[RMDB]
RNA sequence: GGGAACGACUCGAGUAGAGUCGAAAAAAGUGCACCGGAAGUCGGUGAAGCGGGGCUUCGAGUUCACCCUCAUGGUGGUCGGCGAGUCCGGACUGGGCAAGUCCACGCUGAUCAACAGUCUCUUUCACGUACCAUACGGUUUCGACCGUAUGGUACGAAAAGAAACAACAACAACAAC
Reactivity to 2A3 in 0.01 (KOAc 150mM, MgCl2 10mM, bicine 150mM(pH8.5), 24C), signal-to-noise 1, nucleotides 027 to 126: a060a000g090u070g040c030a000c000c010g000g070a140a060g200u240c060g070g060u050g050a010a000g110c050g060g040g050g000c000u060u050c060g010a000g000u040u100c030a050c000c000c010u100c020a130u030g010g010u010g000g000u000c000g000g030c010g000a020g060u080c110c090g000g000a000c010u030g020g160g190c160a050a000g000u000c000c000a000c020g000c010u020g000a000u050c010a040a030c020a040g120u000c000u000c000u030u090u060c130a080
Reactivity to DMS in 0.01 (KOAc 150mM, MgCl2 10mM, bicine 150mM(pH8.5), 24C), signal-to-noise 2, nucleotides 027 to 126: a050a060g020u000g010c020a040c020c010g000g030a050a140g000u010c040g080g020u010g000a050a060g060c040g020g010g020g010c050u000u010c030g020a090g000u000u010c050a140c030c060c010u000c170a170u020g010g020u000g000g000u000c020g000g010c000g000a080g010u020c250c140g000g000a020c000u010g010g020g000c180a150a030g000u000c010c010a140c000g010c010u010g050a000u010c000a030a020c090a050g020u000c060u000c030u000u010u000c130a120
Source: RMDB library OK2TRN, as collected in RNAgym. This 177-nucleotide RNA was probed chemically with 2A3 and DMS. The 2A3 profile rests on 1,161 reads. For 2A3 the reverse transcriptase was SuperScript II with manganese. As a SHAPE reagent, 2A3 marks flexible, mostly unpaired nucleotides at the ribose 2'-OH.